Chemical mapping of a 177-nucleotide RNA with DMS. DMS adducts were read by reverse transcription with MarathonRT. DMS (dimethyl sulfate) methylates the pairing face of unpaired adenines and cytosines. Conditions: 150 mM KOAc, 10 mM MgCl2 and 150 mM bicine (pH 8.5), 24 C.

RNA sequence: GGGAACGACUCGAGUAGAGUCGAAAAGAUAUGGAGUCCGCGUUUGAUCUCACAAUUGAGUCUAUCACUCGGAAACGAGUGAUGGACAAUGAUGUUGUGAGGAUCAAACGCGGACUCCUAAGUCGCACACUAUCUUAAGCUUCGGCUUAAGAUAGUGAAAAGAAACAACAACAACAAC
Reactivity to DMS in 0.01 (KOAc 150mM, MgCl2 10mM, bicine 150mM(pH8.5), 24C), signal-to-noise 2, nucleotides 027 to 126: g000a050u000a300u000g000g010a020g010u000c000c020g000c010g010u000u000u010g010a020u010c000u000c010a000c000a000a010u000u000g010a090g000u000c000u000a020u000c000a000c020u000c010g030g010a140a160a260c010g000a010g030u000g000a010u000g010g020a010c000a120a050u010g000a110u000g000u000u000g010u010g000a040g000g000a010u000c000a000a010a010c000g020c010g010g000a000c010u010c000c000u000a010a070g010u000c020g010c290a290
For DMS, 2,906 sequencing reads were counted.